[RMDB]
The record gives the reactivity of an RNA of 177 nucleotides to DMS and 2A3. The RNA was probed in 150 mM KOAc, 10 mM MgCl2 and 150 mM bicine (pH 8.5) at 24 C. For DMS the reverse transcriptase was MarathonRT. Values are in units of 0.01, from 0 to 300, in steps of 10. For 2A3 the reverse transcriptase was SuperScript II with manganese. The 2A3 profile rests on 7,555 reads.

RNA sequence: GGGAACGACUCGAGUAGAGUCGAAAAGUAUGGCUCGCGUUAUUCUCUCCUCACGUGUAGUCGAGAAGCCUAUACUCGUUGACGAGAAGACCCUCGUCAUAAUCGACGGUCAUCAUAGGUAUAACGCGAUGGGUUUUAGGUUCGCCUAAAACCCAUCAAAAGAAACAACAACAACAAC
Reactivity to DMS in 0.01 (KOAc 150mM, MgCl2 10mM, bicine 150mM(pH8.5), 24C), signal-to-noise 4, nucleotides 027 to 126: g010u070a060u030g020g010c030u010c040g000c030g010u010u000a030u010u010c000u010c010u010c030c020u000c030a060c160g020u030g020u030a040g010u020c050g000a050g000a060a150g000c020c010u000a000u010a140c030u010c020g000u030u020g010a070c060g000a020g000a130a160g000a060c150c020c030u000c020g000u010c120a030u040a090a060u030c060g010a030c210g010g000u000c110a050u030c190a060u000a010g010g030u000a060u020a010a030c000g000c070
Reactivity to 2A3 in 0.01 (KOAc 150mM, MgCl2 10mM, bicine 150mM(pH8.5), 24C), signal-to-noise 8, nucleotides 027 to 126: g090u100a120u280g040g000c010u010c020g000c000g010u000u020a080u120u010c060u000c010u000c000c010u040c010a090c070g130u130g080u210a050g010u040c030g010a010g010a040a010g000c020c010u030a030u030a050c040u040c020g050u050u080g030a030c020g000a000g010a100a060g050a060c020c000c000u010c000g010u010c010a030u080a030a080u120c060g020a040c070g020g050u060c050a080u040c000a010u080a030g020g000u070a050u030a140a030c040g000c000